Conditions: 150 mM KOAc, 10 mM MgCl2 and 150 mM bicine (pH 8.5), 24 C. This 177-nucleotide RNA was probed chemically with DMS and 2A3. For DMS the reverse transcriptase was MarathonRT. In probing experiments dimethyl sulfate is read out at A N1 and C N3, which are open when not base-paired. Source: RMDB library TTRDEL, as collected in RNAgym.
RNA sequence: GGGAACGACUCGAGUAGAGUCGAAAAGAUAUGGAUACAAGUUCUUUUGACGUAAUUCGGAAACGAAUUGACGAUAAGAAUGUAUCCUAAGUCAAAACAGGUAGAGCCGUUCGCGGCUCUACCUGAACGAGUGUUUAUUGUUCGCAAUAAACACUCGAAAAGAAACAACAACAACAAC
Reactivity to DMS in 0.01 (KOAc 150mM, MgCl2 10mM, bicine 150mM(pH8.5), 24C), signal-to-noise 3, nucleotides 027 to 126: g000a010u000a170u010g000g010a010u000a000c000a030a090g010u000u000c000u000u000u000u000g020a290c100g000u000a020a010u000u010c000g010g000a060a030a070c000g010a020a000u000u000g010a030c000g030a100u000a020a010g010a020a030u000g000u000a000u000c000c000u010a020a140g010u000c010a110a080a150a260c010a000g010g000u000a020g000a000g010c000c000g010u000u010c240g050c010g040g010c010u000c000u010a010c000c000u000g000a010a080
Reactivity to 2A3 in 0.01 (KOAc 150mM, MgCl2 10mM, bicine 150mM(pH8.5), 24C), signal-to-noise 3, nucleotides 027 to 126: g010a000u050a010u090g000g000a000u000a020c030a140a250g120u070u040c020u020u220u230u230g110a030c020g030u030a000a020u020u000c000g010g030a010a040a040c020g000a000a000u000u060g180a070c000g020a040u090a290a020g000a010a030u010g000u010a010u000c000c000u000a050a000g030u000c000a000a000a150a200c020a000g010g020u010a010g010a000g010c010c050g040u160u170c300g010c020g120g000c000u050c000u020a000c000c000u000g000a000a010